[RMDB]
Overview:
Structure probing data (2A3) for a 177-nucleotide construct. 2A3 adducts were read by reverse transcription with SuperScript II with manganese. Conditions: 150 mM KOAc, 10 mM MgCl2 and 150 mM bicine (pH 8.5), 24 C. Source: RMDB library M2PK50, as collected in RNAgym.
RNA sequence: GGGAACGACUCGAGUAGAGUCGAAAACUGACUAGGUUCGCCUAGUCAGAAAUAAAAGGAGCAAUAGCAUGAGCUCCUAAAAAUCAUGCAAGACGAAAGUCAAAACUCGUUACUUCGGUAACGAGAACGAGUGAUAGUGGUUCGCCACUAUCACUCGAAAAGAAACAACAACAACAAC
Reactivity to 2A3 in 0.01 (KOAc 150mM, MgCl2 10mM, bicine 150mM(pH8.5), 24C), signal-to-noise 1, nucleotides 027 to 126: c000u030g000a020c000u010a000g020g020u050u000c140g040c060c000u000a020g000u000c010a010g040a010a010a000u180a000a130a030a010g040g000a020g000c030a070a260u120a080g000c000a040u010g020a000g000c000u000c000c000u000a000a000a000a020a000u020c020a030u000g000c070a040a080g020a000c030g050a110a030a010g020u020c040a010a040a000a130c010u000c000g000u020u000a000c010u030u060c260g060g000u010a000a000c010g000a000g010a000a030